[RMDB]
The data come from the RNA Mapping Database (RMDB), libraries RFM100 and RFMREP. Structure probing data (DMS and 2A3) for a 177-nucleotide construct. The reactions ran in a buffer of 150 mM KOAc, 10 mM MgCl2 and 150 mM bicine (pH 8.5), at 24 C. Values cover nucleotides 27 to 126.
RNA sequence: GGGAACGACUCGAGUAGAGUCGAAAAGUGUACAUGAACUUAUAAGACGAGUACAACGUAUGGUACAUCACAUGUAUCUUAUUAGUUUUUAAGUACCUCGUGUACAUAGACUUAUGAGACGAGUACAGCAAGUUGUUAGUUUCGACUAACAACUUGCAAAAGAAACAACAACAACAAC
Reactivity to DMS in 0.01 (KOAc 150mM, MgCl2 10mM, bicine 150mM(pH8.5), 24C), signal-to-noise 2, nucleotides 027 to 126: g010u010g000u010a010c030a070u050g030a080a100c000u010u020a050u000a010a000g010a050c020g010a240g000u010a000c040a060a050c020g000u070a030u020g020g010u000a000c000a090u030c260a070c140a250u000g000u000a020u060c120u010u000a070u040u010a060g020u010u000u000u010u020a090a100g000u000a000c020c050u010c040g020u010g030u000a000c010a050u030a230g000a060c000u000u000a000u010g010a010g000a060c080g010a180g010u000a000c030a070
Reactivity to 2A3 in 0.01 (KOAc 150mM, MgCl2 10mM, bicine 150mM(pH8.5), 24C), signal-to-noise 5, nucleotides 027 to 126: g060u030g020u040a010c020a030u120g070a240a030c000u000u010a010u000a030a030g020a030c050g010a010g010u000a000c050a180a040c110g060u120a060u200g020g010u010a010c000a030u140c060a070c020a130u110g060u190a110u100c010u050u080a120u060u100a140g070u020u000u010u010u140a120a020g000u010a020c010c000u010c020g010u030g020u000a000c000a000u220a020g020a010c020u020u010a000u060g000a010g040a040c040g030a030g010u000a010c020a000